[RMDB]
RNA sequence: GGGAACGACUCGAGUAGAGUCGAAAAGUUGACAUGACCCAAAAAGUUUUUCUGUCUUUAAAAUAGGGAUGAUGAUCUCUAUAUCCUAAGAUACUGAGAGUAUGAAAUGUAGGAAUGUAAGUAAACCAGCGACCUAAAUAUUCGUAUUUAGGUCGCUAAAAGAAACAACAACAACAAC
Reactivity to DMS in 0.01 (KOAc 150mM, MgCl2 10mM, bicine 150mM(pH8.5), 24C), signal-to-noise 1, nucleotides 027 to 126: g000u020u000g000a120c090a040u000g010a140c040c010c030a040a100a070a190a190g000u000u000u000u000u000c030u000g000u000c000u000u000u040a050a090a070a040u010a010g010g010g000a000u000g040a250u010g000a160u000c030u000c020u000a040u000a060u000c130c050u010a030a050g010a010u000a050c190u010g010a110g010a090g010u020a010u000g010a000a070a100u000g010u000a020g000g000a250a030u000g000u000a050a090g030u000a040a100a120c200c060